[RMDB]
RNA sequence: GGGAACGACUCGAGUAGAGUCGAAAACGAAUAGUGUUGAGACGGUGACAGGGCAGCUGCCUGGUCCUGGCGAGACCCGAUACGACUAUGUUGUUCUGUCUCGGGAUUGGGAGCAGAACACGGCCAGGAGUGCAAUACAGUUCGCUGUAUUGCACUCAAAAGAAACAACAACAACAAC
Reactivity to 2A3 in 0.01 (KOAc 150mM, MgCl2 10mM, bicine 150mM(pH8.5), 24C), signal-to-noise 2, nucleotides 027 to 126: c010g040a030a070u090a170g110u080g040u070u110g040a050g000a040c040g040g060u090g020a010c010a060g030g000g000c030a060g010c060u170g070c030c020u050g000g010u010c010c030u010g020g040c000g010a060g060a020c020c000c000g010a020u040a100c080g040a030c070u050a040u220g100u070u020g010u070u000c030u020g150u090c010u000c000g050g090g000a100u160u220g100g040g000a030g020c020a010g000a010a010c000a000c030g020g000c020c000a080g090
Reactivity to DMS in 0.01 (KOAc 150mM, MgCl2 10mM, bicine 150mM(pH8.5), 24C), signal-to-noise 3, nucleotides 027 to 126: c070g000a140a090u010a040g020u000g010u000u010g010a160g020a070c140g010g010u010g000a050c040a120g000g010g010c040a140g020c120u010g010c020c010u010g000g010u000c020c020u000g010g000c040g000a210g000a070c050c040c020g000a110u010a050c090g010a060c040u010a080u010g010u010u000g010u000u000c000u000g000u030c020u000c000g020g010g010a300u010u010g000g010g000a030g000c000a020g000a030a040c010a040c050g010g000c040c050a130g000
The record gives the reactivity of an RNA of 177 nucleotides to 2A3 and DMS.
For 2A3, 2,965 sequencing reads were counted.
It was measured as part of the RMDB library OK2TRN.
DMS adducts were read by reverse transcription with MarathonRT.
The RNA was probed in 150 mM KOAc, 10 mM MgCl2 and 150 mM bicine (pH 8.5) at 24 C.
2A3 adducts were read by reverse transcription with SuperScript II with manganese.